The record gives the reactivity of an RNA of 177 nucleotides to 2A3.
[RMDB]
RNA sequence: GGGAACGACUCGAGUAGAGUCGAAAACGCUAAACAUGAAAGCGCUCCAACAGUCUCAAAUUUCGCUCGAAAAUUUCGGCAGCAUGUAAUGGAGCAAGUGAACUUUGAAAUGCCGAAACAAUACAUCACGAUUUACGUGGUUCGCCACGUAAAUCGUAAAAGAAACAACAACAACAAC
Reactivity to 2A3 in 0.01 (KOAc 150mM, MgCl2 10mM, bicine 150mM(pH8.5), 24C), signal-to-noise 2, nucleotides 027 to 126: c050g000c030u120a010a080a000c070a130u110g140a000a110a000g000c040g010c060u040c010c010a170a150c050a020g090u080c030u080c170a000a100a130u050u090u000c010g040c030u080c070g110a000a000a000a180u000u030u000c000g000g000c000a010g080c020a010u230g010u020a140a050u080g000g000a060g000c000a000a040g020u000g000a000a060c060u020u080u100g040a290a000a000u070g000c030c000g030a000a010a100c030a030a050u290a090c030a020u100c090
The data come from the RNA Mapping Database (RMDB), library OK1LIB.